[RMDB]
RNA sequence: GGGAACGACUCGAGUAGAGUCGAAAAGGGGUCCUCAUCUUUGGGCUCUCCCAGAAGCUUGGAUUUAUAUACUGAAGCCUCCACGGUAUAUUGUCAGCUUCUGUGAGAGAGCCGAUGAGGACGGAGGCACCCAAACCUUGUACUUCGGUACAAGGAAGUAAUUCACACAGUUCGCUGUGUGAAUUACAAAAGAAACAACAACAACAAC
Reactivity to DMS in 0.01 (KOAc 150mM, MgCl2 10mM, bicine 150mM(pH8.5), 24C), signal-to-noise 1, nucleotides 027 to 156: g000g000g000g020u000c010c060u050c060a050u040c090u040u000u050g060g030g050c060u000c050u000c050c040c050a070g000a050a040g000c000u000u000g020g050a040u030u030u000a040u010a050u040a060c030u000g010a080a140g010c040c020u030c000c030a300c020g020g000u000a030u000a020u010u000g030u000c030a090g000c000u000u000c000u000g010u010g000a130g030a010g020a020g010c000c030g020a010u000g010a040g010g000a000c000g020g030a030g020g010c000a170c020c030c000a090a130a130c020c010u000u000g030u010a010c020u000u020c300g100g050u000a010c010a030a020g010g010a030a090
Reactivity to 2A3 in 0.01 (KOAc 150mM, MgCl2 10mM, bicine 150mM(pH8.5), 24C), signal-to-noise 2, nucleotides 027 to 156: g040g000g030g010u000c010c000u000c000a000u010c010u180u230u210g120g030g000c000u000c000u010c000c000c000a000g000a010a000g020c280u300u300g100g010a110u300u300u060a000u040a000u000a000c010u020g050a140a020g050c000c020u000c020c010a000c000g010g000u010a000u000a000u000u030g000u010c040a020g000c000u000u000c000u000g020u070g000a300g000a010g010a000g030c000c000g000a000u000g000a000g000g000a000c010g000g000a000g000g000c010a070c010c000c000a010a070a100c010c010u000u000g020u000a000c000u030u070c300g110g000u000a000c000a000a000g000g000a010a010

Conditions: 150 mM KOAc, 10 mM MgCl2 and 150 mM bicine (pH 8.5), 24 C. Structure probing data (DMS and 2A3) for a 207-nucleotide construct. DMS adducts were read by reverse transcription with MarathonRT. The 2A3 profile rests on 3,555 reads. In probing experiments dimethyl sulfate is read out at A N1 and C N3, which are open when not base-paired.